Chemical mapping of a 177-nucleotide RNA with DMS and 2A3. 2A3 adducts were read by reverse transcription with SuperScript II with manganese. The data come from the RNA Mapping Database (RMDB), library TTRDEL. Conditions: 150 mM KOAc, 10 mM MgCl2 and 150 mM bicine (pH 8.5), 24 C.
RNA sequence: GGGAACGACUCGAGUAGAGUCGAAAAGAUAUGGAGAUGUGACAUGCUGAUGGAUCGGAAACGAUCCUGCCAGCAACAGCACAUUCUCCUAAGUCAAAACGCGUGAAAUGUUCGCAUUUCACGCGAAUCUCCAUGAUCGGUUCGCCGAUCAUGGAGAAAAAGAAACAACAACAACAAC
Reactivity to DMS in 0.01 (KOAc 150mM, MgCl2 10mM, bicine 150mM(pH8.5), 24C), signal-to-noise 1, nucleotides 027 to 126: g000a060u000a300u030g000g000a020g060a010u000g010u000g000a090c060a280u000g020c000u000g030a210u030g010g000a020u000c000g000g000a040a020a070c000g020a000u000c000c000u000g010c210c040a000g000c020a030a070c270a110g000c010a010c000a020u020u020c000u000c010c000u000a010a110g000u010c030a080a070a120a140c130g000c000g040u000g000a000a010a000u000g010u000u000c200g000c000a000u000u000u020c010a000c050g020c010g000a010a050
Reactivity to 2A3 in 0.01 (KOAc 150mM, MgCl2 10mM, bicine 150mM(pH8.5), 24C), signal-to-noise 1, nucleotides 027 to 126: g020a010u060a010u120g000g000a000g010a000u010g010u000g070a100c100a180u190g030c000u010g000a050u100g000g040a010u000c040g000g070a090a000a040c000g000a000u000c030c000u020g000c070c000a000g050c000a050a040c070a030g030c000a000c010a010u280u030c000u000c010c000u000a060a000g020u000c020a000a010a100a220c120g030c010g000u000g020a000a000a000u060g010u070u120c180g050c190a020u000u020u000c000a000c030g000c010g010a000a020